[RMDB]
RNA sequence: GGGAACGACUCGAGUAGAGUCGAAAAUAUACGCAUUCGUGCGUAUAGAAAAUCCUAAGUCCAAUGAUGGCAAUACUUGCUUUGAUCAGUUUCGGAAACGAAACUGGGAGCAAAUUGCUUGAGGAUAUGGAAAUUGGGCGAAGCUUCGGCUUCGCAAGAGUAAACAUGUUUUCGAACAUGUUUACUCAAAAGAAACAACAACAACAAC
Reactivity to DMS in 0.01 (KOAc 150mM, MgCl2 10mM, bicine 150mM(pH8.5), 24C), signal-to-noise 3, nucleotides 027 to 156: u000a000u000a010c000g010c000a050u000u020c280g050u000g010c000g040u000a010u010a010g000a110a080a130a170u000c010c000u000a110a250g020u000c010c010a160a140u000g010a120u000g020g000c000a030a030u000a040c180u000u000g010c000u000u020u010g020a150u010c000a000g020u000u000u000c010g010g010a190a140a220c040g000a010a000a030c000u010g020g010g010a030g000c050a010a070a060u000u000g000c000u000u000g000a070g000g000a030u000a080u000g010g000a090a150a070u010u000g000g000g010c000g010a020a020g010c000u000u000c300g070g020c010u010u010c010g030c020a000a030
Reactivity to 2A3 in 0.01 (KOAc 150mM, MgCl2 10mM, bicine 150mM(pH8.5), 24C), signal-to-noise 5, nucleotides 027 to 156: u020a000u010a000c010g010c010a010u020u090c300g130u060g020c000g000u000a000u000a000g010a030a170a000a030u030c010c000u050a150a030g050u000c010c010a140a300u110g040a030u090g040g000c000a010a010u040a250c090u010u000g040c020u190u070u170g100a170u220c010a000g000u000u000u000c010g000g030a110a070a080c010g000a000a000a000c000u000g010g000g000a000g000c000a000a010a150u000u000g000c000u000u010g010a020g000g000a010u020a060u090g050g070a100a100a100u200u220g150g080g010c000g000a000a000g000c010u050u110c280g110g000c000u000u000c000g000c000a000a020